[RMDB]
RNA sequence: GGGAACGACUCGAGUAGAGUCGAAAAGAAUCUUGAAGAGUGUUACAAGUUGUGUAACCUCGACGUGACAUUCUCCACUUUUGAAAUGGCAAUUAAUAAUGCUCACAGAUUUGGUAUAUUAAUUACAGACCGAUCUUUUAACAAUUUUUGGCCAUCGCGGAGUUAACUACUUCGGUAGUUAACUCCGAAAAGAAACAACAACAACAAC
Reactivity to 2A3 in 0.01 (KOAc 150mM, MgCl2 10mM, bicine 150mM(pH8.5), 24C), signal-to-noise 1, nucleotides 027 to 156: g000a000a010u010c030u110u170g000a020a050g000a020g000u210g000u000u000a030c060a100a180g060u130u140g170u090g000u060a010a000c000c000u000c010g000a000c020g060u080g020a010c000a100u030u000c060u030c000c000a040c000u110u200u050u130g100a110a130a050u060g010g000c000a000a000u050u100a060a050u120a110a070u040g040c080u070c050a070c020a060g080a070u040u300u300g060g000u010a060u000a000u160u150a200a170u120u100a090c100a040g110a040c010c000g010a030u000c000u010u110u040u110a170a040c040a000a020u000u110u080u020u080g080g000c020c000a020u050c040g020

The record gives the reactivity of an RNA of 207 nucleotides to 2A3. It was measured as part of the RMDB library OK3TST. The 2A3 profile rests on 423 reads. The RNA was probed in 150 mM KOAc, 10 mM MgCl2 and 150 mM bicine (pH 8.5) at 24 C. Reactivities are given for positions 27 through 156.